[RMDB]
RNA sequence: GGGAACGACUCGAGUAGAGUCGAAAAAGGAUGGCGUCCGACCUACACACCGGGUCGCUGGCUGUCAUCGGCGGCGGUGUCAUCGGGCUGUCGGUGGCCCGCCGUGCCGCCCAAGCCGGCUGGCCGGGACUAGUCCGCCGUUCGCGGCGGACUAGUCAAAAGAAACAACAACAACAAC
Reactivity to 2A3 in 0.01 (KOAc 150mM, MgCl2 10mM, bicine 150mM(pH8.5), 24C), signal-to-noise 2, nucleotides 027 to 126: a000g140g000a040u050g030g020c020g020u000c000c000g050a060c020c050u200a050c100a040c000a060c040c030g050g030g080u060c050g000c010u010g000g050c000u020g070u110c060a050u030c020g000g000c040g010g000c040g000g020u230g050u090c000a000u000c010g080g170g110c130u160g230u270c000g000g010u010g010g010c000c000c000g000c000c020g010u020g010c010c010g040c000c020c020a000a000g000c000c010g030g000c030u150g060g040c000c000g020g000
This 177-nucleotide RNA was probed chemically with 2A3.
Source: RMDB library OK1LIB, as collected in RNAgym.
The RNA was probed in 150 mM KOAc, 10 mM MgCl2 and 150 mM bicine (pH 8.5) at 24 C.
Values cover nucleotides 27 to 126.